Structure probing data (2A3) for a 207-nucleotide construct.
Conditions: 150 mM KOAc, 10 mM MgCl2 and 150 mM bicine (pH 8.5), 24 C.

RNA sequence: GGGAACGACUCGAGUAGAGUCGAAAAUGUUUGUGUGUGUAUAUGUGUGUAUAUUGUAUGUAUCUGUGUGUGUCUGUGUCUGCCUCUGUGUGUGUGUCUGUGUGUGCAUUUGUGUGUAUACAUGUGGGUAUGUGUGUGCAUGUUUUGUGUGUACGUAGGUGAGGAUUAGGUUCGCCUAAUCCUCACCAAAAGAAACAACAACAACAAC
Reactivity to 2A3 in 0.01 (KOAc 150mM, MgCl2 10mM, bicine 150mM(pH8.5), 24C), signal-to-noise 2, nucleotides 027 to 156: u130g030u070u120u000g040u010g000u000g020u000g170u020a030u000a050u080g070u020g030u010g020u010a030u020a040u090u090g060u100a060u090g060u030a120u040c060u060g080u000g010u000g000u030g020u060c050u020g120u040g060u030c020u020g000c000c020u050c040u050g000u000g000u010g000u010g000u000g020u020c020u080g000u040g030u000g010u020g030c040a020u010u080u000g020u020g000u000g030u050a050u020a110c080a030u090g010u040g040g000g070u100a100u060g030u000g020u000g010u000g020c000a080u030g090u040u000u020u070g050u010g000u000g030u020a020c050g030u060a010